[RMDB]
The data come from the RNA Mapping Database (RMDB), library 15KLIB. Structure probing data (DMS and 2A3) for a 170-nucleotide construct. For DMS, 4,113 sequencing reads were counted.
RNA sequence: GGGAACGACUCGAGUAGAGUCGAAAAUUGAAGGUAAAACAGCCUGUGGGUGAAACACACCCACAGGGCCCAUUGGGCGCUAGCACUCUGGUAUCACGGUACCUAUGUGCGCCUGUUUUACCGAAGGUGAGCGCUGCCUUCGGGCAGCGCAAAAGAAACAACAACAACAAC
Reactivity to DMS in 0.01 (KOAc 150mM, MgCl2 10mM, bicine 150mM(pH8.5), 24C), signal-to-noise 2, nucleotides 027 to 129: u010u130g020a220a000g110g000u000a120a010a000a000c000a050g040c000c000u000g030u010g040g000g010u030g020a140a120a080c300a300c050a030c020c050c000a040c040a070g020g010g000c020c020c010a080u000u000g000g020g040c030g000c000u020a000g060c040a000c020u060c300u020g030g100u000a030u000c040a110c300g050g040u060a000c000c010u000a030u000g030u030g040c030g030c020c050u030g050u060u050u000u000a000c000c000g000a000a070g030g090u080g000a200
Reactivity to 2A3 in 0.01 (KOAc 150mM, MgCl2 10mM, bicine 150mM(pH8.5), 24C), signal-to-noise 2, nucleotides 027 to 129: u120u120g050a060a000g000g000u000a000a000a000a000c000a000g000c000c000u030g000u000g000g010g030u010g000a030a060a000c100a030c000a030c080c000c050a010c000a000g010g000g020c000c000c000a070u220u300g050g000g000c010g000c020u070a070g000c010a000c030u110c210u010g000g000u000a000u010c020a000c280g110g000u000a000c000c000u040a030u060g000u000g000c000g000c000c000u030g000u000u000u000u000a010c010c020g000a000a000g110g020u040g070a040
For 2A3, 3,621 sequencing reads were counted. DMS adducts were read by reverse transcription with MarathonRT.